Chemical mapping of a 177-nucleotide RNA with 2A3 and DMS. The data come from the RNA Mapping Database (RMDB), library RFM100. The RNA was probed in 150 mM KOAc, 10 mM MgCl2 and 150 mM bicine (pH 8.5) at 24 C. For 2A3, 1,803 sequencing reads were counted. High DMS reactivity at an A or C suggests that its Watson-Crick edge is free.
RNA sequence: GGGAACGACUCGAGUAGAGUCGAAAAAAUGGCACUUCCGAAAAUGGGCUGUAGCGCAGCGUGACCAUGCUGUGCGAGGACGACCUAACGUCCUCUCUAUGAGCCGACCGGCUCCCUGAGCACCACGAGACGACUCUUUUUUCGAAAAGAGUCGUCUAAAAGAAACAACAACAACAAC
Reactivity to 2A3 in 0.01 (KOAc 150mM, MgCl2 10mM, bicine 150mM(pH8.5), 24C), signal-to-noise 3, nucleotides 027 to 126: a000a000u080g090g000c060a050c020u130u060c020c040g070a060a020a030a100u090g050g010g000c040u040g060u120a040g040c000g000c020a000g000c040g080u090g050a100c050c000a060u070g000c000u000g020u010g000c020g010a000g000g000a010c020g050a090c010c120u120a180a060c010g010u000c010c000u000c010u000c000u020a110u140g060a010g010c030c020g020a070c050c060g010g020c030u050c000c010c010u020g000a000g050c020a010c080c000a020c030g010
Reactivity to DMS in 0.01 (KOAc 150mM, MgCl2 10mM, bicine 150mM(pH8.5), 24C), signal-to-noise 2, nucleotides 027 to 126: a020a050u010g030g000c010a070c020u020u010c000c010g050a070a020a010a070u010g000g000g000c030u000g030u000a140g000c150g010c040a000g050c000g000u030g000a200c150c130a020u040g000c020u000g030u000g000c090g080a030g010g000a010c000g000a090c200c120u030a090a220c040g020u010c010c000u000c000u000c030u000a110u000g010a040g040c050c000g000a170c160c130g000g000c020u020c010c060c050u000g000a120g000c020a050c100c020a030c160g000